Structure probing data (2A3 and DMS) for a 177-nucleotide construct.
[RMDB]
RNA sequence: GGGAACGACUCGAGUAGAGUCGAAAAUGCGGCGGAAACAGCGCAGGCUGUUCCUGCCCGCGUUUUCCGCCGUGCAGCUAAGAUUGCCCAGUCGGGGGAGUCUGCGGAUUUCGCCCAGGUUGAGGUGCCAACCUUAGUAGUUCGCUACUAAGGUUGGAAAAGAAACAACAACAACAAC
Reactivity to 2A3 in 0.01 (KOAc 150mM, MgCl2 10mM, bicine 150mM(pH8.5), 24C), signal-to-noise 3, nucleotides 027 to 126: u170g000c000g020g000c000g020g000a000a010a030c030a080g010c000g020c020a010g010g020c030u100g120u280u150c020c040u040g030c000c000c000g020c020g000u030u000u050u000c010c000g020c000c000g010u010g000c010a010g060c020u060a110a030g050a280u130u220g030c000c020c000a010g030u040c030g000g010g000g010g010a010g020u020c010u020g000c110g130g010a020u090u120u040c110g130c030c010c010a010g020g010u030u040g050a080g020g000u030g070
Reactivity to DMS in 0.01 (KOAc 150mM, MgCl2 10mM, bicine 150mM(pH8.5), 24C), signal-to-noise 6, nucleotides 027 to 126: u010g020c010g010g000c000g010g000a000a010a030c230a060g010c110g010c060a040g010g010c110u010g010u010u010c050c040u010g010c030c020c040g020c000g020u000u000u010u000c000c020g010c020c020g010u000g010c140a070g000c110u000a090a100g010a090u000u000g000c000c000c010a110g020u010c070g010g010g020g000g000a030g000u000c010u000g020c150g020g000a070u000u000u000c070g010c010c000c010a100g030g010u010u000g010a120g010g020u000g010

Source information: The RNA was probed in 150 mM KOAc, 10 mM MgCl2 and 150 mM bicine (pH 8.5) at 24 C. The DMS profile rests on 11,734 reads.